Structure probing data (DMS and 2A3) for a 177-nucleotide construct.

RNA sequence: GGGAACGACUCGAGUAGAGUCGAAAAGAGAACGACGCGAACUGUGCGGCGCUGGGCGAAAUGUGGCGAGGUGCCGGGCAGCAUUAUGAAAACAUGGUCUGCAUUACCAUUGGAACCGGCAUUGGCGCUACCAGCAUCCUUUCGAGGAUGCUGGUAGAAAAGAAACAACAACAACAAC
Reactivity to DMS in 0.01 (KOAc 150mM, MgCl2 10mM, bicine 150mM(pH8.5), 24C), signal-to-noise 3, nucleotides 027 to 126: g040a060g010a100a070c030g000a040c060g020c010g010a110a130c090u030g000u010g000c070g020g000c170g010c020u000g040g010g030c090g020a070a100a060u040g000u020g010g000c000g000a150g000g000u000g000c010c000g030g010g010c050a040g000c100a020u010u000a010u000g000a140a070a120a120c180a010u020g000g000u000c020u000g010c030a180u030u020a160c000c050a110u010u020g000g010a030a300c020c010g000g000c000a000u010u020g030g000c100g020
Reactivity to 2A3 in 0.01 (KOAc 150mM, MgCl2 10mM, bicine 150mM(pH8.5), 24C), signal-to-noise 4, nucleotides 027 to 126: g170a020g000a050a040c060g030a020c030g050c030g010a060a060c040u040g030u130g100c000g030g000c050g000c010u040g000g060g000c060g070a050a050a070u250g000u070g040g010c030g010a050g060g010u000g020c000c000g000g000g040c040a010g000c030a010u050u130a100u230g140a050a050a030a050c050a030u050g000g100u030c010u010g010c000a060u030u200a140c030c030a090u060u160g040g010a080a030c010c020g020g000c030a020u020u090g080g040c020g000
For DMS, 3,652 sequencing reads were counted. It was measured as part of the RMDB library OK1LIB. The RNA was probed in 150 mM KOAc, 10 mM MgCl2 and 150 mM bicine (pH 8.5) at 24 C. 2A3 adducts were read by reverse transcription with SuperScript II with manganese.